[RMDB]
RNA sequence: GGGAACGACUCGAGUAGAGUCGAAAAUACGUACUAGACUCUCACAAAGAAGUAAGACAUUUUGAUUUGCGUCCCAGGCAAAUCCUGGAGAGGCCCUAGUCUGAAAUGAAGUAUGAUUCUAUACCACGAGUGUAUCACCUUUCGAGGUGAUAUAUUCAAAAGAAACAACAACAACAAC
Reactivity to 2A3 in 0.01 (KOAc 150mM, MgCl2 10mM, bicine 150mM(pH8.5), 24C), signal-to-noise 9, nucleotides 027 to 126: u040a010c030g050u020a020c010u010a020g050a070c000u020c000u000c020a090c050a130a260a030g110a080a020g120u150a080a040g110a070c070a110u100u140u120u200g040a040u020u010u060g000c010g040u050c020c000c000a000g030g000c010a020a020a060u080c020c040u090g030g010a060g010a020g030g000c000c010c030u010a010g010u010c020u070g090a120a110a080u100g020a080a010g040u060a070u100g070a090u160u020c050u100a080u040a100c010c050a050c120
Reactivity to DMS in 0.01 (KOAc 150mM, MgCl2 10mM, bicine 150mM(pH8.5), 24C), signal-to-noise 9, nucleotides 027 to 126: u010a100c120g010u010a030c030u000a050g010a080c010u000c010u000c030a160c130a090a110a110g010a090a090g010u010a100a090g010a180c160a080u000u000u010u010g000a040u000u000u000g000c010g010u000c020c010c020a190g000g000c020a020a020a020u000c010c250u000g010g000a040g010a030g000g010c150c200c030u000a010g010u010c040u000g010a070a090a120u010g000a080a090g000u000a030u000g000a160u000u000c060u010a080u010a110c070c100a090c190
About this RNA: Chemical mapping of a 177-nucleotide RNA with 2A3 and DMS. It was measured as part of the RMDB library OK2TRN. The RNA was probed in 150 mM KOAc, 10 mM MgCl2 and 150 mM bicine (pH 8.5) at 24 C.